[RMDB]
RNA sequence: GGGAACGACUCGAGUAGAGUCGAAAAUUGGCACUAAAGGUGCCAAGUCUAGAUCCACGUGUAGAUGCACAUCUACCACCAACAGGCUGUGUCUCUGAGUAUACAGAGACACCGGUGGGGUGAGAUCUAGAGACCAGGCACUAUAGAUUGCCUACUACACUAGCAAUUACUUCGGUGAUUGCUGGUGAAAAGAAACAACAACAACAAC
Reactivity to 2A3 in 0.01 (KOAc 150mM, MgCl2 10mM, bicine 150mM(pH8.5), 24C), signal-to-noise 7, nucleotides 027 to 156: u070u010g000g000c000a000c010u040a010a030a100g050g000u000g000c000c000a000a000g000u000c000u000a000g000a010u000c010c020a050c090g100u110g020u050a080g020a140u150g110c130a070c010a080u000c010u040a030c010c000a010c010c010a030a160c020a060g160g000c100u070g010u000g000u010c000u000c000u000g010a030g110u160a060u030a140c000a000g000a000g000a000c000a000c000c000g000g000u010g000g030g030g000u010g010a200g000a000u000c000u000a000g000a000g000a010c020c020a010g000g010c000a000c000u040a020u010a050g060a080u020u130g000c000c000u000a020c000u020a010
Reactivity to DMS in 0.01 (KOAc 150mM, MgCl2 10mM, bicine 150mM(pH8.5), 24C), signal-to-noise 5, nucleotides 027 to 156: u000u000g010g010c030a050c020u000a050a130a180g010g000u000g030c000c010a010a010g030u000c000u000a020g000a020u000c010c020a110c090g030u010g030u000a040g000a070u010g020c160a130c090a090u000c020u000a050c010c070a080c020c000a090a110c050a110g020g000c090u010g010u000g010u010c010u000c000u010g000a300g020u000a190u010a210c020a020g000a020g010a010c010a000c000c010g010g010u000g010g010g020g020u010g000a080g010a030u000c010u000a020g010a070g000a080c040c030a180g010g000c010a060c020u000a220u000a090g000a180u000u000g010c000c010u000a050c020u000a240